[RMDB]
RNA sequence: GGGAACGACUCGAGUAGAGUCGAAAAGAUAUGGAGGCAACUUUUGACGACUUACAGUCGGAAACGACUGAAGAGUCGAUAAGUUGCUCCUAAGUCAAACACUGGCAAGCUUCGGCUUGCCAGUGAACGGUAAUAUAUAGUUCGCUAUAUAUUACCGAAAAGAAACAACAACAACAAC
Reactivity to DMS in 0.01 (KOAc 150mM, MgCl2 10mM, bicine 150mM(pH8.5), 24C), signal-to-noise 3, nucleotides 027 to 126: g000a030u010a300u010g000g010a030g020g000c010a010a000c000u010u010u000u010g020a150c070g020a100c010u000u000a160c020a010g010u000c000g010g000a060a090a180c000g010a010c000u000g000a140a080g020a300g010u010c000g010a050u000a000a000g000u000u000g000c010u000c010c000u010a040a200g010u000c020a140a060a200c000a010c000u000g000g000c020a000a020g010c000u000u010c250g030g010c000u000u000g000c020c000a000g010u000g000a010a070
Reactivity to 2A3 in 0.01 (KOAc 150mM, MgCl2 10mM, bicine 150mM(pH8.5), 24C), signal-to-noise 3, nucleotides 027 to 126: g020a010u090a020u130g000g020a040g160g200c010a010a000c020u030u100u160u230g230a160c060g030a050c020u010u080a110c030a020g010u020c000g000g000a050a050a010c020g020a000c010u040g080a180a070g020a060g030u020c020g010a000u000a010a010g000u000u000g000c000u010c000c000u000a020a020g060u010c030a060a110a070c010a000c000u000g000g000c030a000a020g020c010u090u260c300g080g000c010u000u000g010c000c020a000g000u010g000a010a000